[RMDB]
RNA sequence: GGGAACGACUCGAGUAGAGUCGAAAAGAUAUGGACCGACUCCCCACCAGUGUCUUCCGAAGAACUCGGAAACGAGGGAGGAAGCUACUGAGGUCGGUCCUAAGUCAAAGACCCGUUCGCGGGUCAAGUUGGAAGAAAAGUUCGCUUUUCUUCCAACAAAAGAAACAACAACAACAAC
Reactivity to DMS in 0.01 (KOAc 150mM, MgCl2 10mM, bicine 150mM(pH8.5), 24C), signal-to-noise 3, nucleotides 027 to 126: g000a170u000a180u000g020g000a040c000c020g010a030c020u000c130c030c000c070a300c110c020a010g000u000g000u010c010u000u000c000c000g000a100a140g010a150a170c000u000c000g010g010a080a060a130c030g000a000g020g010g000a070g000g000a030a010g010c010u000a020c000u000g010a110g000g000u000c010g010g000u000c000c000u000a020a090g000u000c070a060a140a220g000a010c000c000c010g040u000u000c150g040c030g020g000g020u000c000a000a080
Reactivity to 2A3 in 0.01 (KOAc 150mM, MgCl2 10mM, bicine 150mM(pH8.5), 24C), signal-to-noise 2, nucleotides 027 to 126: g050a040u240a140u300g000g010a000c020c010g010a010c030u180c070c040c010c000a010c010c000a000g000u010g010u030c010u020u000c020c020g160a300a070g000a070a030c010u000c000g030g000a020a050a030c010g000a010g010g000g000a010g020g000a000a000g000c010u030a000c000u010g010a020g030g000u020c000g000g000u010c000c000u020a040a030g030u050c040a050a010a180g010a010c060c000c020g010u070u090c290g000c030g180g060g000u000c000a000a010